[RMDB]
Overview:
Chemical mapping of a 177-nucleotide RNA with DMS and 2A3. The reactions ran in a buffer of 150 mM KOAc, 10 mM MgCl2 and 150 mM bicine (pH 8.5), at 24 C. It was measured as part of the RMDB library OK1LIB.
RNA sequence: GGGAACGACUCGAGUAGAGUCGAAAAUGGGGUAUAGACAAACACGCAUGCAUGCAUAGAUGCAUGCAUAUGUAUGCAUAUUGUCUAUUUUUGCAAACACAUAUUCUAGACAUGCAUCUCAUGCUGCCCUGCACUCCGUAUUCGUACGGAGUGCAGGAAAAGAAACAACAACAACAAC
Reactivity to DMS in 0.01 (KOAc 150mM, MgCl2 10mM, bicine 150mM(pH8.5), 24C), signal-to-noise 2, nucleotides 027 to 126: u000g000g000g000g060u050a000u040a020g000a060c100a020a100a140c250a070c150g020c100a000u090g000c090a000u020g000c260a070u030a040g000a000u020g020c000a010u010g010c030a010u000a000u000g000u020a030u000g020c030a100u010a070u000u000g000u000c100u020a040u000u000u030u050u000g000c100a080a050a040c210a090c050a060u010a000u000u010c180u000a060g000a100c030a020u000g000c020a000u000c020u000c050a000u010g020c010u000g020c020
Reactivity to 2A3 in 0.01 (KOAc 150mM, MgCl2 10mM, bicine 150mM(pH8.5), 24C), signal-to-noise 6, nucleotides 027 to 126: u090g000g000g030g070u110a080u050a070g040a070c070a030a150a010c090a000c100g030c030a010u120g010c020a010u030g010c010a040u070a130g070a050u050g000c000a000u010g000c000a000u010a000u000g010u010a010u040g000c000a010u060a100u190u110g110u080c110u120a160u050u140u030u070u060g020c040a050a080a030c050a020c010a070u040a060u120u170c060u080a070g030a110c000a020u000g000c000a030u000c000u000c030a030u060g010c020u020g010c020

Record summary
DMS adducts were read by reverse transcription with MarathonRT.